[RMDB]
RNA sequence: GGGAACGACUCGAGUAGAGUCGAAAAGAUAUGGAAUAAUAUGUGGACAUGUCUACAGGCUCGGAAACGAGCCUGAGACAACAGCCAUUUGAUUAUUCCUAAGUCAAAACGCCGCCUUCGGGCGGCGGACUACUAUCAUCUUCGGAUGAUAGUAGUCAAAAGAAACAACAACAACAAC
Reactivity to 2A3 in 0.01 (KOAc 150mM, MgCl2 10mM, bicine 150mM(pH8.5), 24C), signal-to-noise 2, nucleotides 027 to 126: g010a020u090a010u220g000g000a020a010u020a000a010u060a050u190g000u020g000g050a060c080a180u080g020u020c010u240a230c110a020g000g040c000u020c010g040g040a110a120a060c000g010a020g000c010c000u000g000a000g010a000c000a000a020c010a000g090c000c000a040u170u080u170g180a010u000u010a000u020u000c000c000u020a170a010g060u040c050a090a130a050a110c020g050c040c040g020c040c030u040u130c270g160g040g050c000g010g070c020g000
Reactivity to DMS in 0.01 (KOAc 150mM, MgCl2 10mM, bicine 150mM(pH8.5), 24C), signal-to-noise 2, nucleotides 027 to 126: g020a040u020a300u000g000g000a050a000u010a050a020u000a040u010g010u000g000g000a110c070a270u000g020u010c010u000a140c000a000g000g030c000u010c010g040g000a060a100a170c010g000a020g010c000c010u000g020a010g000a000c010a040a090c300a080g030c030c000a020u010u060u010g010a040u000u000a000u010u010c000c000u010a010a200g000u000c020a100a100a230a300c000g010c000c000g090c000c010u000u000c280g020g020g060c040g010g010c000g010

Chemical mapping of a 177-nucleotide RNA with 2A3 and DMS.
For DMS, 1,083 sequencing reads were counted.
For 2A3, 2,315 sequencing reads were counted.
For 2A3 the reverse transcriptase was SuperScript II with manganese.